[RMDB]
RNA sequence: GGGAACGACUCGAGUAGAGUCGAAAACAUUGAGAAGGAGAUUCUGGCUCUGCUCCCACCUAAUAUUUUCUAUGGCGAUGCCUAUGAGGAGUCAGUGUUUUCUGCGGCCAUCUCUGGGGCUGGCCCCGGUGACGAUUAAAUUCGUUUAAUCGUCACCAAAAGAAACAACAACAACAAC
Reactivity to 2A3 in 0.01 (KOAc 150mM, MgCl2 10mM, bicine 150mM(pH8.5), 24C), signal-to-noise 5, nucleotides 027 to 126: c020a060u100u240g050a090g040a200a060g040g020a040g020a040u080u020c010u050g010g020c000u020c010u030g050c020u020c020c000c000a050c020c010u080a150a210u080a240u180u240u090u080c090u100a100u120g030g000c060g170a090u180g030c030c020u080a110u130g060a060g040g000a000g010u030c020a010g000u020g020u030u020u010u050c030u060g020c030g050g010c030c010a050u010c070u010c050u110g130g030g020g000c020u000g030g010c000c000c000c030
Reactivity to DMS in 0.01 (KOAc 150mM, MgCl2 10mM, bicine 150mM(pH8.5), 24C), signal-to-noise 5, nucleotides 027 to 126: c070a080u010u010g010a100g020a130a070g000g000a060g000a070u000u000c030u000g010g010c010u000c010u000g010c070u000c020c030c040a100c130c060u010a070a100u000a090u010u000u010u010c080u000a090u000g000g020c030g010a100u010g020c040c060u000a090u000g010a090g020g000a040g020u000c010a020g010u000g010u000u000u000u000c030u000g010c140g000g000c020c030a050u000c040u000c060u030g010g010g000g010c140u000g000g000c010c010c100c150